[RMDB]
RNA sequence: GGGAACGACUCGAGUAGAGUCGAAAAGCUUUCCGUUUCGACGGAAAGCAAAGGCAAGUACAUGAGAGAUCAAUGAUCACUCAGAAAAGCCGUACUAAAGAAAAAUCAAUCUGUUCGCAGAUUGAAACAUCCUAAAGUUAUUCGUAACUUUAGGAUGAAAAGAAACAACAACAACAAC
Reactivity to DMS in 0.01 (KOAc 150mM, MgCl2 10mM, bicine 150mM(pH8.5), 24C), signal-to-noise 6, nucleotides 027 to 126: g000c000u000u000u000c000c000g010u000u000u020c160g020a030c010g010g000a000a000a000g010c000a010a030a080g010g020c000a030a030g020u000a090c060a140u000g010a010g010a060g020a010u000c010a200a150u010g020a020u000c000a070c000u010c000a030g000a020a130a220a240g010c010c010g000u000a160c060u010a030a070a120g010a040a070a090a110a120u000c000a000a000u000c000u000g010u000u010c190g030c000a010g000a020u000u000g000a020a100a150
Reactivity to 2A3 in 0.01 (KOAc 150mM, MgCl2 10mM, bicine 150mM(pH8.5), 24C), signal-to-noise 6, nucleotides 027 to 126: g010c000u000u000u000c000c000g010u030u030u110c190g110a020c000g000g000a000a000a000g000c000a040a020a000g000g010c020a030a030g060u050a050c100a190u090g000a010g000a000g000a010u010c050a150a210u300g000a000u010c000a050c030u000c000a010g040a010a090a010a010g010c020c040g020u030a030c040u140a060a130a080g080a040a120a030a010a020u020c000a010a000u000c000u010g020u030u020c090g010c060a000g000a020u010u000g000a020a000a010

The record gives the reactivity of an RNA of 177 nucleotides to DMS and 2A3. The DMS profile rests on 8,407 reads. Reactivities are rounded to 0.1 and cut off at 0 and 3. The reactions ran in a buffer of 150 mM KOAc, 10 mM MgCl2 and 150 mM bicine (pH 8.5), at 24 C. It was measured as part of the RMDB library M2PK50.